[RMDB]
An RNA of 207 nucleotides, treated with DMS and 2A3 and read out base by base.
RNA sequence: GGGAACGACUCGAGUAGAGUCGAAAAUGUGGAAGUCCUGCUCGGGGCGGAAGCAUUAAAACCAUUCGAGCUAGUCAAUGCGUGGCGUGUCUCUCCGCAGCGUGUUGGCGAAUGUAAAGGGUGACUAUUGACCACGCAACGUUCGCGUUGCGUGGAACAUUAGGUUACCCUUCGGGGUAACCUAAUGAAAAGAAACAACAACAACAAC
Reactivity to DMS in 0.01 (KOAc 150mM, MgCl2 10mM, bicine 150mM(pH8.5), 24C), signal-to-noise 2, nucleotides 027 to 156: u000g000u000g020g000a300a220g010u000c010c000u010g030c140u020c110g030g060g020g020c030g000g000a300a300g000c040a040u010u000a000a120a060a090c030c030a100u000u020c040g000a120g090c020u000a190g070u000c030a030a040u010g010c000g040u000g000g050c030g010u000g000u000c080u010c050u000c230c010g030c010a040g010c030g000u000g020u000u000g000g030c000g000a120a070u010g000u000a040a050a100g010g020g040u000g000a140c080u000a140u010u000g020a230c010c020a020c000g000c000a000a010c030g000u000u020c300g000c080g000u000u010g000c010g020u000g000g000a010a050
Reactivity to 2A3 in 0.01 (KOAc 150mM, MgCl2 10mM, bicine 150mM(pH8.5), 24C), signal-to-noise 3, nucleotides 027 to 156: u070g010u050g050g040a090a050g020u010c010c010u050g080c070u050c060g020g000g010g000c000g010g010a000a010g000c010a010u080u210a060a010a010a030c060c030a020u120u140c040g000a010g000c030u040a010g010u010c010a000a010u010g000c000g020u020g090g000c000g000u080g020u000c020u010c010u000c030c000g000c020a040g000c010g000u030g010u000u000g000g010c000g000a000a010u080g040u160a020a050a040g010g020g000u030g020a000c030u070a110u200u190g100a070c000c010a000c020g000c010a010a000c000g020u070u070c190g000c000g100u000u000g000c000g010u000g000g000a000a000

Values are in units of 0.01, from 0 to 300, in steps of 10. It was measured as part of the RMDB library M2RFPK. For DMS, 4,141 sequencing reads were counted. The reactions ran in a buffer of 150 mM KOAc, 10 mM MgCl2 and 150 mM bicine (pH 8.5), at 24 C. In probing experiments dimethyl sulfate is read out at A N1 and C N3, which are open when not base-paired.